The data come from the RNA Mapping Database (RMDB), library OK2TRN. Structure probing data (2A3 and DMS) for a 177-nucleotide construct.
RNA sequence: GGGAACGACUCGAGUAGAGUCGAAAAGGUGAAAUGCCAAUCGAACUUGGAGAUAGCUGGUUCUCCCCGAAAUAGCUUUAGGGCUAGCCUCGAGUGAAGAGUCUUGGAGGUAGAGCACUGAUUGGGCUGAUAUCAAUCAUUUCGAUGAUUGAUAUCAAAAAGAAACAACAACAACAAC
Reactivity to 2A3 in 0.01 (KOAc 150mM, MgCl2 10mM, bicine 150mM(pH8.5), 24C), signal-to-noise 9, nucleotides 027 to 126: g050g010u050g050a090a070a070u190g020c010c000a010a030u070c080g050a040a080c030u040u070g040g000a060g020a070u100a030g070c040u050g040g030u090u020c030u030c000c000c010c020g050a070a050a080u090a030g000c010u070u070u160a100g020g020g010c000u000a010g010c000c010u010c020g020a020g020u080g080a120a140g050a070g140u040c030u030u080g170g010a010g010g010u070a060g030a010g090c020a030c120u040g020a100u060u100g050g020g000c040
Reactivity to DMS in 0.01 (KOAc 150mM, MgCl2 10mM, bicine 150mM(pH8.5), 24C), signal-to-noise 9, nucleotides 027 to 126: g010g010u000g010a070a110a090u020g000c010c010a040a120u000c080g010a090a100c110u000u000g010g000a090g010a070u000a130g010c050u000g000g020u000u000c050u000c020c010c040c060g010a040a060a110u010a040g010c030u000u000u010a090g010g010g010c020u000a090g000c040c020u000c020g000a040g010u000g010a110a110g010a160g010u010c020u000u000g020g020a050g010g010u000a060g000a060g010c030a050c040u000g000a110u000u010g010g010g020c120

Values cover nucleotides 27 to 126. Conditions: 150 mM KOAc, 10 mM MgCl2 and 150 mM bicine (pH 8.5), 24 C.